[RMDB]
RNA sequence: GGGAACGACUCGAGUAGAGUCGAAAAGAUGAUCCUUGAGGGAGAGCCAGAGGUUGUUCCCGGAGGAGAGGAAGAGGUAGAGGCUAGCGAGGAGACCGUGGAGCAGUUCUUCGCUCACAGCAAGGGAGGGCUAAUUUUAGUUCGCUAAAAUUAGCCCAAAAGAAACAACAACAACAAC
Reactivity to DMS in 0.01 (KOAc 150mM, MgCl2 10mM, bicine 150mM(pH8.5), 24C), signal-to-noise 1, nucleotides 027 to 126: g010a100u000g000a140u010c010c000u000u000g010a130g020g000g010a110g010a070g030c010c080a100g010a120g000g030u020u000g000u000u000c000c010c030g000g010a080g000g030a090g000a110g000g000a080a050g030a080g000g000u000a040g010a120g010g050c060u000a120g010c080g000a040g010g050a050g000a030c080c050g040u000g000g000a070g010c160a070g000u000u000c020u000u000c100g000c000u000c090a060c110a050g020c050a050a050g020g000g020a170
This 177-nucleotide RNA was probed chemically with DMS.